[RMDB]
RNA sequence: GGGAACGACUCGAGUAGAGUCGAAAAUACACAUGUUUGAGGCGGCGCGUACCAGUUUGAACUUAUGCCUCAUGCCGCAUGGGCGCCUGCCGGGUUGCGUGGGGUUAAACGUUAACGUAACGCUAACAGUAUAUGCGGUGUUCGCACCGCAUAUACUAAAAGAAACAACAACAACAAC
Reactivity to DMS in 0.01 (KOAc 150mM, MgCl2 10mM, bicine 150mM(pH8.5), 24C), signal-to-noise 2, nucleotides 027 to 126: u010a080c100a180c150a050u020g020u030u030u010g000a060g030g010c030g000g000c160g060c030g000u060a110c050c060a070g000u000u040u030g000a070a100c140u000u020a090u040g000c020c050u000c040a010u000g050c010c000g030c010a080u040g020g020g010c010g010c060c140u020g100c030c010g010g000g020u000u000g000c060g020u000g000g000g010g000u000u020a030a080a100c110g030u020u030a060a080c100g000u000a050a100c010g020c010u010a040a090c130
Reactivity to 2A3 in 0.01 (KOAc 150mM, MgCl2 10mM, bicine 150mM(pH8.5), 24C), signal-to-noise 2, nucleotides 027 to 126: u210a000c100a030c050a070u150g110u050u050u170g120a100g030g000c050g010g020c020g000c010g060u090a150c020c010a050g020u070u040u120g090a070a080c030u160u100a080u300g060c000c000u040c020a000u030g040c040c010g080c090a080u080g090g020g000c020g060c020c030u000g000c010c030g010g000g020u040u070g020c010g000u000g000g050g000g000u020u090a090a090a000c060g030u030u040a060a000c030g010u000a040a000c000g000c080u060a120a030c030
Conditions: 150 mM KOAc, 10 mM MgCl2 and 150 mM bicine (pH 8.5), 24 C. This 177-nucleotide RNA was probed chemically with DMS and 2A3. DMS adducts were read by reverse transcription with MarathonRT.